[RMDB]
RNA sequence: GGGAACGACUCGAGUAGAGUCGAAAAAGGCGAUGUUCGGUGCCGGCCAGGGCCACGAGAACGAAGAGAAGUUCAUGAACAUGCUGAAGGUGAUCGAGCUGCGCGGCGGCACGAAAAGCGAGGCAGCACGCUGUGUACCAUUCGUGGUACACAGCGUAAAAGAAACAACAACAACAAC
Reactivity to 2A3 in 0.01 (KOAc 150mM, MgCl2 10mM, bicine 150mM(pH8.5), 24C), signal-to-noise 1, nucleotides 027 to 126: a000g050g020c060g060a090u060g050u080u020c040g070g080u090g040c020c000g000g030c000c000a060g000g000g000c060c000a080c060g070a060g020a020a000c070g090a180a040g030a000g050a190a050g020u070u050c060a090u230g010a040a020c000a030u140g000c040u080g010a150a020g050g050u040g000a030u040c040g020a000g000c010u110g040c080g020c090g120g000c000g010g030c000a020c030g020a020a000a010a010g050c040g000a030g040g060c010a010g010c020
Reactivity to DMS in 0.01 (KOAc 150mM, MgCl2 10mM, bicine 150mM(pH8.5), 24C), signal-to-noise 2, nucleotides 027 to 126: a140g000g030c050g010a080u010g020u000u000c080g030g000u000g010c050c000g020g000c030c020a130g000g000g040c030c010a060c050g000a080g040a070a060c030g020a140a070g010a190g000a130a070g000u000u000c090a080u000g000a050a040c130a040u010g000c010u000g000a160a120g000g030u010g000a080u000c010g030a240g030c000u000g000c080g000c110g000g020c030g040g020c010a040c030g000a040a020a070a070g010c030g000a090g000g030c080a050g020c040
About this RNA
An RNA of 177 nucleotides, treated with 2A3 and DMS and read out base by base. For DMS, 1,245 sequencing reads were counted. 2A3 adducts were read by reverse transcription with SuperScript II with manganese. The 2A3 profile rests on 1,286 reads.